[RMDB]
RNA sequence: GGGAACGACUCGAGUAGAGUCGAAAAAGGUUCGCUGUGGUGCAACUCUUAUUAGUAACUAAUCCAAAGCAAGUAUAGGAGAACAGGUUUUUAACUAUUUUUAGGGAGAUAAAAAAUAGUAUUUGACAAAAUCGAUUGUCGUUCGCGACAAUCGAAACAGAUAUACGUACUUCGGUACGUAUAUCUGAAAAGAAACAACAACAACAAC
Reactivity to 2A3 in 0.01 (KOAc 150mM, MgCl2 10mM, bicine 150mM(pH8.5), 24C), signal-to-noise 4, nucleotides 027 to 156: a010g060g000u050u070c040g000c050u040g010u040g050g030u040g010c020a040a070c010u030c030u120u130a140u060u090a080g060u040a080a060c040u050a090a070u070c060c040a070a050a060g030c040a070a020g030u040a070u050a100g040g020a040g020a040a020c060a050g000g020u000u000u020u000u090a020a010c000u000a010u020u010u000u010u040a010g030g050g010a120g030a060u170a070a080a000a000a000a000u010a010g010u030a120u080u100u110g030a030c050a010a090a010a080u020c000g000a000u000u000g000u000c010g020u040u060c180g000c000g070a000c000a000a000u010c000g000a000a000a000
Reactivity to DMS in 0.01 (KOAc 150mM, MgCl2 10mM, bicine 150mM(pH8.5), 24C), signal-to-noise 2, nucleotides 027 to 156: a070g020g010u010u000c080g020c020u010g000u000g000g000u000g020c050a040a100c010u000c010u000u000a070u000u010a110g010u000a080a130c040u010a130a120u000c090c050a050a090a100g020c030a050a120g000u000a070u000a080g000g000a070g030a060a100c040a120g020g000u020u000u000u010u000a090a050c000u000a030u000u030u000u000u000a040g000g000g000a220g040a160u030a000a000a020a010a040a030u000a020g020u000a180u000u000u020g010a160c070a030a050a080a150u000c000g010a030u000u000g000u010c000g020u000u000c250g050c040g000a010c000a000a000u020c000g000a010a030a070